[RMDB]
RNA sequence: GGGAACGACUCGAGUAGAGUCGAAAAGAUAUGGACAUUCCGUGGGAUCUAAGACAGUCGGAAACGAUCGAGAUCCCACGGAGAUGUCCUAAGUCUAAACAGGUUACGCGUUCGCGCGUAACCUGAACUCUAUGAGCGAGUUCGCUCGCUCAUAGAGAAAAGAAACAACAACAACAAC
Reactivity to 2A3 in 0.01 (KOAc 150mM, MgCl2 10mM, bicine 150mM(pH8.5), 24C), signal-to-noise 1, nucleotides 027 to 126: g000a000u040a030u100g020g000a000c010a010u010u010c000c000g000u000g000g000g000a000u000c010u050a120a110g180a100c120a070g090u050c010g080g030a130a120a100c040g010a040u120c040g010a000g000a000u020c030c050c000a000c010g000g000a010g000a000u000g010u010c010c000u000a030a000g000u000c040u100a010a060a160c000a030g010g000u000u010a010c020g040c000g010u050u080c290g010c010g030c000g190u010a010a000c000c000u000g000a010a000
Reactivity to DMS in 0.01 (KOAc 150mM, MgCl2 10mM, bicine 150mM(pH8.5), 24C), signal-to-noise 3, nucleotides 027 to 126: g000a040u000a300u000g000g010a010c010a010u010u010c000c000g030u000g010g000g000a000u000c000u000a230a130g010a060c300a090g010u000c010g000g000a110a060a200c020g000a010u000c060g000a020g000a010u000c000c000c000a000c010g000g010a000g010a010u000g010u010c000c000u000a000a060g010u000c010u000a050a110a270c010a000g000g010u000u000a010c000g000c000g020u000u000c220g010c000g010c000g000u000a000a000c000c000u000g010a000a080

Chemical mapping of a 177-nucleotide RNA with 2A3 and DMS.
DMS adducts were read by reverse transcription with MarathonRT.
The RNA was probed in 150 mM KOAc, 10 mM MgCl2 and 150 mM bicine (pH 8.5) at 24 C.